[RMDB]
RNA sequence: GGGAACGACUCGAGUAGAGUCGAAAACGGAAUUAUUGGGCGUAAAGAGCUCGUAGGCGGCUUGUCACGUCGAUUGUGAAAGCCCGAGGCUUAACCUCGGGUCUGCAGUCGAUACGGGCUAGCUAGAAAUUAAAAUAAAAUUCGUUUUAUUUUAAUUAAAAGAAACAACAACAACAAC
Reactivity to 2A3 in 0.01 (KOAc 150mM, MgCl2 10mM, bicine 150mM(pH8.5), 24C), signal-to-noise 4, nucleotides 027 to 126: c010g040g090a040a040u180u100a090u300u300g020g040g000c040g030u090a080a160a150g130a090g000c010u010c020g010u030a070g060g140c070g010g010c000u020u030g010u020c010a010c030g010u010c010g010a020u000u020g000u010g050a180a070a010g010c010c000c000g010a000g020g010c130u260u200a160a210c000c000u000c000g000g000g000u000c000u040g000c000a000g000u000c000g000a000u010a040c010g000g000g000c010u010a000g000c000u020a070g060a000
Reactivity to DMS in 0.01 (KOAc 150mM, MgCl2 10mM, bicine 150mM(pH8.5), 24C), signal-to-noise 3, nucleotides 027 to 126: c060g010g010a130a060u040u010a040u040u040g020g000g000c000g020u030a120a140a220g020a260g000c000u000c020g020u030a060g020g020c120g000g000c000u000u010g010u020c010a030c010g000u000c010g000a010u000u000g000u000g000a100a140a240g000c010c000c000g000a000g000g000c220u060u050a150a300c010c000u010c010g010g000g000u010c010u020g010c010a000g000u010c000g000a170u000a020c010g000g000g000c000u000a010g010c010u000a070g000a070